RNA sequence: GGGAACGACUCGAGUAGAGUCGAAAACGAAACCAUUCUGAUGAUCAAUACAGUAUUUUUGUCGCAUUCUUAUUACGGUACGUGCAAACAUUAGUUUCCAAGCGGAAGAAACUGUGUGUUCAUUUUAAUAUCCAAUCCGUUUCGACGGAUUGGAUAUAAAAGAAACAACAACAACAAC
Reactivity to DMS in 0.01 (KOAc 150mM, MgCl2 10mM, bicine 150mM(pH8.5), 24C), signal-to-noise 3, nucleotides 027 to 126: c110g020a170a130a100c090c040a090u030u010c050u020g000a070u000g010a030u000c040a100a070u010a040c020a020g000u010a050u000u000u010u010u010g010u010c030g000c020a180u020u000c090u000u000a120u000u000a120c150g000g050u000a020c150g020u000g000c060a020a040a090c050a070u000u030a070g010u000u000u000c000c010a090a110g030c110g010g010a040a060g000a020a030a050c010u000g000u000g030u010g010u000u000c050a080u020u000u000u000a020
Reactivity to 2A3 in 0.01 (KOAc 150mM, MgCl2 10mM, bicine 150mM(pH8.5), 24C), signal-to-noise 6, nucleotides 027 to 126: c040g040a110a000a000c030c000a080u100u050c040u100g040a040u010g010a000u040c040a060a040u060a070c010a010g040u030a300u010u060u020u040u050g200u090c010g000c040a050u120u030c100u100u150a190u090u170a080c110g060g000u030a010c030g060u050g070c050a040a100a050c030a100u130u110a040g050u020u040u020c030c030a140a010g030c010g030g030a030a020g030a040a020a010c030u020g000u000g000u010g010u000u000c010a010u000u000u000u080a080